[RMDB]
RNA sequence: GGGAACGACUCGAGUAGAGUCGAAAAUCAUCGUUCUUCGGAACGAUGAAGUAUAACGCGGGCUCCGGACACAGGCGUAGCUGCCCUGGGAUAGUCACAGUAUGGGGCAAACUUUCGAGUUUGCCAAUCGUAGUUAUCGUUUCGACGAUAACUACGAAAAAGAAACAACAACAACAAC
Reactivity to 2A3 in 0.01 (KOAc 150mM, MgCl2 10mM, bicine 150mM(pH8.5), 24C), signal-to-noise 1, nucleotides 027 to 126: u040c010a020u000c010g020u000u020c000u010u020c280g060g010a000a000c000g000a010u000g010a010a000g000u050a090u040a170a040c040g020c020g020g080g000c050u010c050c010g030g040a040c070a010c000a060g050g010c010g010u040a010g000c080u060g020c000c000c000u020g030g030g010a090u060a090g030u070c050a010c030a080g060u100a100u190g180g010g000g000c030a000a000a000c020u110u080u130c190g020a040g000u000u040u030g000c000c000a000a020
Reactivity to DMS in 0.01 (KOAc 150mM, MgCl2 10mM, bicine 150mM(pH8.5), 24C), signal-to-noise 3, nucleotides 027 to 126: u010c000a000u000c000g010u000u000c000u000u010c230g020g000a010a000c000g010a010u000g000a010a050g010u000a090u000a040a080c120g000c070g020g000g030c040u000c040c020g000g010a060c110a050c130a090g010g010c060g000u000a080g010c080u000g000c050c020c010u010g000g010g000a110u000a070g020u000c030a050c110a090g000u000a110u000g000g000g010g020c010a000a000a010c000u000u000u010c210g020a030g000u000u000u000g010c000c010a040a040